[RMDB]
Chemical mapping of a 177-nucleotide RNA with DMS and 2A3. DMS (dimethyl sulfate) methylates the pairing face of unpaired adenines and cytosines. The data come from the RNA Mapping Database (RMDB), libraries RFM100 and RFMREP.
RNA sequence: GGGAACGACUCGAGUAGAGUCGAAAAGGAGAGCAAGAGCUUGAGUGAAGCUCAUAGAAACAACAGUAAGUUGCAGAGGUGGUGCAAGAAACAAGAUAGGCUACUUAUCAAGUGCUUCAAAGCCAUCCCUCACUAGUGUCUUCGGACACUAGUGAGGAAAAGAAACAACAACAACAAC
Reactivity to DMS in 0.01 (KOAc 150mM, MgCl2 10mM, bicine 150mM(pH8.5), 24C), signal-to-noise 2, nucleotides 027 to 126: g040g020a060g000a010g000c070a110a080g010a080g060c030u000u030g010a110g010u020g010a060a050g020c030u000c020a050u000a100g000a120a050a180c100a050a060c210a090g000u000a060a060g000u000u000g000c130a070g010a080g000g000u010g000g050u010g040c170a040a190g000a030a010a080c120a050a130g000a010u000a010g020g030c040u000a040c100u000u000a040u000c060a010a120g000u000g000c010u000u000c030a020a070a150g000c040c020a010u000c010
Reactivity to 2A3 in 0.01 (KOAc 150mM, MgCl2 10mM, bicine 150mM(pH8.5), 24C), signal-to-noise 3, nucleotides 027 to 126: g070g020a080g010a010g030c060a130a080g050a010g020c030u120u040g080a070g040u160g150a090a000g000c010u000c010a020u030a000g070a050a130a020c050a010a010c000a020g030u130a120a050g010u110u030g020c080a020g000a040g070g040u030g000g020u020g000c020a020a030g050a080a080a000c060a080a010g000a050u080a010g070g000c050u090a020c000u220u040a040u050c030a100a000g010u000g080c030u040u030c020a040a090a020g000c000c020a000u030c010